Description:
Chemical mapping of a 177-nucleotide RNA with DMS. Conditions: 150 mM KOAc, 10 mM MgCl2 and 150 mM bicine (pH 8.5), 24 C. It was measured as part of the RMDB library OK2TRN. DMS adducts were read by reverse transcription with MarathonRT.
[RMDB]
RNA sequence: GGGAACGACUCGAGUAGAGUCGAAAAAUCUCAAAGUCUCGGGCGUGGGCCAACAGGCCCAUGAACAGGAAGCCCAGGAUUUACAGAAUGUACAGAAGUCCGGAUGUUCCUAAGGGGUGUGAGGGUCGCUUCAAUACCUCUUCGGAGGUAUUGAAGCAAAAGAAACAACAACAACAAC
Reactivity to DMS in 0.01 (KOAc 150mM, MgCl2 10mM, bicine 150mM(pH8.5), 24C), signal-to-noise 1, nucleotides 027 to 126: a080u020c030u010c030a130a110a110g040u020c040u000c040g000g000g030c030g040u010g000g000g000c030c000a090a190c300a100g000g000c000c000c000a030u000g000a090a100c180a070g010g000a090a110g020c030c020c000a100g000g000a010u000u000u000a060c180a110g040a080a030u000g010u010a090c100a080g000a100a030g000u000c030c010g010g000a090u030g000u000u000c000c010u000a090a060g010g000g020g050u000g000u030g010a100g030g000g000u000c190